Structure probing data (DMS and 2A3) for a 177-nucleotide construct.
For 2A3 the reverse transcriptase was SuperScript II with manganese.
As a SHAPE reagent, 2A3 marks flexible, mostly unpaired nucleotides at the ribose 2'-OH.
Source: RMDB library OK2TST, as collected in RNAgym.
The DMS profile rests on 4,392 reads.
The 2A3 profile rests on 2,394 reads.
The RNA was probed in 150 mM KOAc, 10 mM MgCl2 and 150 mM bicine (pH 8.5) at 24 C.
[RMDB]
RNA sequence: GGGAACGACUCGAGUAGAGUCGAAAAGCAUAGUCUCAAGCGAGUGGAAUGACGGUUUCCUAUAGAAGCACAGUUCCUACAGGAAAGAAGGCGUGGUUAAGAGCAUGAGGGCCAAGGAAAAGGAGGGCUAUGAGAAAGCUUUCGAGCUUUCUCAUAGAAAAGAAACAACAACAACAAC
Reactivity to DMS in 0.01 (KOAc 150mM, MgCl2 10mM, bicine 150mM(pH8.5), 24C), signal-to-noise 4, nucleotides 027 to 126: g020c070a050u010a090g000u000c020u000c040a100a100g020c070g020a060g030u000g000g000a090a060u010g010a140c150g010g000u010u000u000c000c030u010a110u010a100g000a050a040g000c030a070c150a160g010u000u010c010c010u000a080c110a070g020g000a040a060a090g000a090a070g000g020c040g020u000g020g010u000u010a050a070g020a090g000c030a030u000g010a080g010g010g010c030c030a070a100g000g010a040a040a080a130g000g010a070g010g000g010
Reactivity to 2A3 in 0.01 (KOAc 150mM, MgCl2 10mM, bicine 150mM(pH8.5), 24C), signal-to-noise 3, nucleotides 027 to 126: g030c020a060u040a140g020u010c010u020c060a060a030g070c050g100a040g080u100g010g060a130a100u100g050a030c030g020g040u010u000u040c020c010u090a080u050a140g060a040a010g010c030a040c040a130g030u070u020c000c000u020a050c030a020g100g030a080a070a020g060a010a010g060g020c060g020u010g000g020u100u100a100a040g040a000g030c040a060u050g020a060g000g000g050c020c010a040a040g070g040a080a100a020a000g030g030a020g040g000g000